Source: RMDB library RFMREP, as collected in RNAgym. An RNA of 177 nucleotides, treated with 2A3 and DMS and read out base by base. The 2A3 profile rests on 1,157 reads. For 2A3 the reverse transcriptase was SuperScript II with manganese. Values are in units of 0.01, from 0 to 300, in steps of 10. For DMS the reverse transcriptase was MarathonRT.
RNA sequence: GGGAACGACUCGAGUAGAGUCGAAAAGUGGCGAAAGCGCCUCAGGAAGACGGAUCCGACGGUGAGGGACGAAAGCUCGGGUCACGAACCGGAUUAGAUACCCGGGUAGUCCGAGCUGUAAACGAUGCAGAUUAUCAUCGUUCGCGAUGAUAAUCUGAAAAGAAACAACAACAACAAC
Reactivity to 2A3 in 0.01 (KOAc 150mM, MgCl2 10mM, bicine 150mM(pH8.5), 24C), signal-to-noise 1, nucleotides 027 to 126: g010u040g050g000c050g050a190a030a040g110c010g060c000c000u020c030a000g040g030a030a030g050a030c060g000g000a030u020c020c040g000a010c020g030g010u070g010a080g030g000g000a020c020g090a290a010a000g000c000u000c000g000g000g050u130c070a000c030g000a020a000c010c000g030g020a050u060u070a040g050a130u170a110c000c010c010g000g000g000u040a000g030u000c000c000g000a020g040c000u000g000u040a010a010a000c030g030a030u210g080
Reactivity to DMS in 0.01 (KOAc 150mM, MgCl2 10mM, bicine 150mM(pH8.5), 24C), signal-to-noise 3, nucleotides 027 to 126: g040u000g010g000c010g020a140a110a120g030c120g030c050c010u000c090a070g010g020a080a070g010a050c080g010g000a080u000c060c060g010a090c100g030g010u000g020a080g010g020g010a070c130g000a130a090a010g010c000u000c000g000g000g020u020c150a040c040g000a120a300c030c000g000g000a030u010u010a110g010a230u000a080c100c020c000g000g000g030u000a140g000u020c000c010g000a030g000c000u000g010u010a060a080a060c160g000a130u010g020